Description
The data come from the RNA Mapping Database (RMDB), library M2PK90. This 177-nucleotide RNA was probed chemically with DMS. For DMS the reverse transcriptase was MarathonRT. Reactivities are given for positions 27 through 126. The reactions ran in a buffer of 150 mM KOAc, 10 mM MgCl2 and 150 mM bicine (pH 8.5), at 24 C.
RNA sequence: GGGAACGACUCGAGUAGAGUCGAAAAAUGAUUCGUAGUGUAAGACGAACGACAGUCAUCGCUUGCCAGCAGGACCACCAAAGGAAUACGCUUCGGUAACUACUCGAGAUCCCAAGCGAUAAAACAAUGGGAGACAUUAAUUCGUUAAUGUCUCCCAAAAAGAAACAACAACAACAAC
Reactivity to DMS in 0.01 (KOAc 150mM, MgCl2 10mM, bicine 150mM(pH8.5), 24C), signal-to-noise 1, nucleotides 027 to 126: a030u000g000a080u000u010c040g000u000a150g050u000g060u000a110a090g000a030c000g010a130a060c060g000a100c120a060g000u010c090a050u000c050g010c010u000u020g030c060c060a080g020c060a090g000g010a190c100c030a040c030c060a020a100a020g000g040a040a090u010a080c110g000c030u000u000c070g000g000u000a100a170c040u000a000c000u000c000g030a030g040a210u000c020c030c000a000a070g030c120g000a150u030a020a080a060a020c230a030a060